[RMDB]
The record gives the reactivity of an RNA of 177 nucleotides to DMS and 2A3. DMS adducts were read by reverse transcription with MarathonRT.
RNA sequence: GGGAACGACUCGAGUAGAGUCGAAAAUAGAAAUAUCUAGGACAAUAGUUUCUAUACUGUCUGUAACUCUGAUAAUCUCUAAAGUCACUAACUGAUACCAUGAAAUUGAGAAGAUCAAACGCUGAAGCUGAAAUCAGAGAUUCGUCUCUGAUUUCAGAAAAGAAACAACAACAACAAC
Reactivity to DMS in 0.01 (KOAc 150mM, MgCl2 10mM, bicine 150mM(pH8.5), 24C), signal-to-noise 2, nucleotides 027 to 126: u000a070g010a050a050a080u000a060u010c050u000a100g000g010a070c060a040a080u000a090g010u020u000u030c030u000a050u000a110c100u000g020u010c010u000g040u000a060a090c140u020c140u010g010a060u020a050a070u010c070u000c010u020a030a070a110g020u000c040a080c060u010a080a030c120u000g000a130u000a060c090c050a040u000g010a070a080a110u000u030g000a060g010a060a050g010a070u000c060a040a030a110c210g040c070u000g010a040a090g000
Reactivity to 2A3 in 0.01 (KOAc 150mM, MgCl2 10mM, bicine 150mM(pH8.5), 24C), signal-to-noise 1, nucleotides 027 to 126: u120a000g020a000a160a030u140a040u120c050u080a050g010g020a020c030a030a080u060a050g040u010u010u040c030u030a060u050a140c030u030g000u080c000u000g060u120a150a060c030u020c060u110g030a030u010a150a060u060c030u040c010u060a090a100a000g020u050c000a000c060u030a160a040c010u050g030a040u070a110c000c030a040u040g000a010a080a080u090u100g040a090g010a050a010g000a050u030c020a140a000a000c080g030c090u070g030a020a000g020
It was measured as part of the RMDB library OK2TST.
The DMS profile rests on 1,057 reads.